[RMDB]
RNA sequence: GGGAACGACUCGAGUAGAGUCGAAAACACACUCCCUUCGGGGAGUGUGAAAGAUCGCGUGGGACACGCAAGGAGGAGCGUGUGGGACGCGACAAACCCAAAAAAGUGGAUAGUUCGCUAUCCACAACUUAAUUACUGUCUUCGGACAGUAAUUAAGAAAAGAAACAACAACAACAAC
Reactivity to DMS in 0.01 (KOAc 150mM, MgCl2 10mM, bicine 150mM(pH8.5), 24C), signal-to-noise 5, nucleotides 027 to 126: c010a010c010a010c010u000c000c010c010u000u000c180g030g020g010g010a010g010u010g020u010g010a020a070a080g010a110u000c000g010c000g010u000g020g020g010a040c000a000c000g010c010a080a100g010g020a300g000g010a130g000c010g010u000g000u000g050g030g000a020c000g020c000g010a010c030a050a090a140c010c000c000a010a060a050a050a080a090g020u000g000g000a010u000a010g000u000u010c230g020c000u000a000u000c000c000a000c000a020a050
Reactivity to 2A3 in 0.01 (KOAc 150mM, MgCl2 10mM, bicine 150mM(pH8.5), 24C), signal-to-noise 7, nucleotides 027 to 126: c010a000c000a000c000u010c000c010c050u000u050c200g040g000g000g000a000g000u000g000u000g000a000a000a000g030a300u010c000g000c010g020u020g020g300g020a010c000a000c010g000c050a050a060g170g070a090g070g050a150g040c020g000u010g000u010g000g200g000a000c000g000c000g010a000c000a010a010a020c000c000c000a070a140a030a010a000a010g010u000g010g000a010u010a010g020u050u070c260g010c130u000a000u000c000c000a000c000a000a000